[RMDB]
The record gives the reactivity of an RNA of 207 nucleotides to 2A3 and DMS. The data come from the RNA Mapping Database (RMDB), library RNAMAK. DMS adducts were read by reverse transcription with MarathonRT.
RNA sequence: GGGAACGACUCGAGUAGAGUCGAAAAGGGGUCACCCUCGUUGAUCGAGAUCAAGGCAACAGCCAUGGCUGAAGCCUCCACGGCCAUGGACAUGCCUUGGUCUCGGGAGAGGGUGACGGAGGCACCCAAAAGGCUAGCUAGUUCGCUAGCUAGCCAAGUCAGGUAUAUUGUUCGCAAUAUACCUGACAAAAGAAACAACAACAACAAC
Reactivity to 2A3 in 0.01 (KOAc 150mM, MgCl2 10mM, bicine 150mM(pH8.5), 24C), signal-to-noise 4, nucleotides 027 to 156: g020g020g090g020u010c000a000c000c000c000u000c010g160u170u040g010a020u020c010g000a000g010a000u010c000a000a000g030g010c080a300a020c070a300g000c000c000a000u000g000g000c000u020g020a090a010g010c000c000u010c000c000a020c010g010g000c000c010a000u010g020g030a010c030a140u300g000c000c000u000u000g000g000u000c000u000c000g000g000g000a040g010a000g000g000g000u000g000a000c010g000g000a000g000g000c000a020c000c010c000a040a150a010a020g000g010c010u000a000g000c000u000a000g020u070u090c210g040c150u000a000g000c000u000a000g020c000c000a000a000
Reactivity to DMS in 0.01 (KOAc 150mM, MgCl2 10mM, bicine 150mM(pH8.5), 24C), signal-to-noise 1, nucleotides 027 to 156: g000g000g020g010u020c020a020c000c000c010u010c020g030u000u030g030a040u010c030g000a000g000a020u000c010a000a030g000g020c010a120a140c100a140g060c010c010a030u000g010g090c000u030g000a110a130g030c010c000u000c000c010a300c090g000g020c010c010a030u010g020g000a050c020a150u010g020c030c010u000u000g010g010u020c010u030c000g030g000g020a060g010a020g000g020g020u010g000a000c010g020g020a080g040g000c000a180c000c020c010a070a070a120a200g030g040c000u000a000g020c000u000a020g030u010u000c300g010c010u000a010g030c000u010a030g020c010c000a000a010

The RNA was probed in 150 mM KOAc, 10 mM MgCl2 and 150 mM bicine (pH 8.5) at 24 C.